[RMDB]
RNA sequence: GGGAACGACUCGAGUAGAGUCGAAAAGCAAAAACGUAACACCUCGGUUAAGCAGGAGAUGAUCGCCGGACUAACGACCUUUAUGACCAUGGCGUAUAUCAUCGUCGUCAAUCCAGCUAUCAUGGGCGUGUGUCUAAGUAUUCGUACUUAGACACACAAAAGAAACAACAACAACAAC
Reactivity to DMS in 0.01 (KOAc 150mM, MgCl2 10mM, bicine 150mM(pH8.5), 24C), signal-to-noise 5, nucleotides 027 to 126: g020c090a050a060a050a070a060c130g010u010a060a090c110a080c030c030u000c060g010g010u000u010a060a110g010c090a080g010g010a150g010a030u000g010a020u000c080g000c010c010g000g010a030c050u010a060a060c050g000a050c020c050u000u000u000a040u000g000a050c040c060a120u010g000g010c110g030u000a050u010a050u000c100a030u000c090g010u000c020g010u000c040a050a080u000c010c010a040g020c030u000a030u010c030a040u010g010g010g010c180
Reactivity to 2A3 in 0.01 (KOAc 150mM, MgCl2 10mM, bicine 150mM(pH8.5), 24C), signal-to-noise 5, nucleotides 027 to 126: g060c040a040a040a030a050a030c050g040u050a060a020c050a090c060c020u030c050g100g000u140u110a080a030g030c060a040g030g090a130g010a030u040g010a010u040c020g000c000c010g030g000a020c030u050a040a020c030g030a060c020c010u060u120u050a090u110g040a040c020c050a160u220g130g000c130g000u050a080u020a000u150c060a020u030c020g020u010c010g000u000c000a010a020u020c010c000a000g000c020u050a020u060c020a050u060g030g070g050c090
An RNA of 177 nucleotides, treated with DMS and 2A3 and read out base by base.
The RNA was probed in 150 mM KOAc, 10 mM MgCl2 and 150 mM bicine (pH 8.5) at 24 C.
2A3 adducts were read by reverse transcription with SuperScript II with manganese.
Source: RMDB library OK2TRN, as collected in RNAgym.
The 2A3 profile rests on 9,470 reads.